[RMDB]
RNA sequence: GGGAACGACUCGAGUAGAGUCGAAAACCUAUCCAAAAUGAGAUCCCAUCUCGCACACUGUGCUAAUUUGAGAUUCUCAUGCCUCCUACUUGGAGAGAUCUGGACUAGAAGUCAGGGCAUCUGACUCAAUACAUUCGUCAGUUCGCUGACGAAUGAACAUCGGUGUGUCGUUCGCGACACACCGAUGAAAAGAAACAACAACAACAAC
Reactivity to 2A3 in 0.01 (KOAc 150mM, MgCl2 10mM, bicine 150mM(pH8.5), 24C), signal-to-noise 2, nucleotides 027 to 156: c040c000u010a110u030c010c000a000a000a000a170u000g000a000g000a020u020c030c000c000a000u010c030u020c010g000c010a020c000a040c080u270g000u000g010c000u050a140a150u020u000u010g040a050g000a040u300u040c000u000c000a010u080g020c000c000u050c000c000u160a280c170u190u300g000g000a000g010a010g000a010u050c040u090g000g070a030c020u040a040g040a160a030g070u000c000a000g020g040g210c100a080u050c100u020g000a000c000u000c010a020a060u040a090c010a000u000u000c010g000u000c000a000g000u010u050c130g010c180u010g000a000c000g030a000a010u000g000a050a020
An RNA of 207 nucleotides, treated with 2A3 and read out base by base. Reactivities are given for positions 27 through 156. It was measured as part of the RMDB library M2RFPK. Reactivities are rounded to 0.1 and cut off at 0 and 3.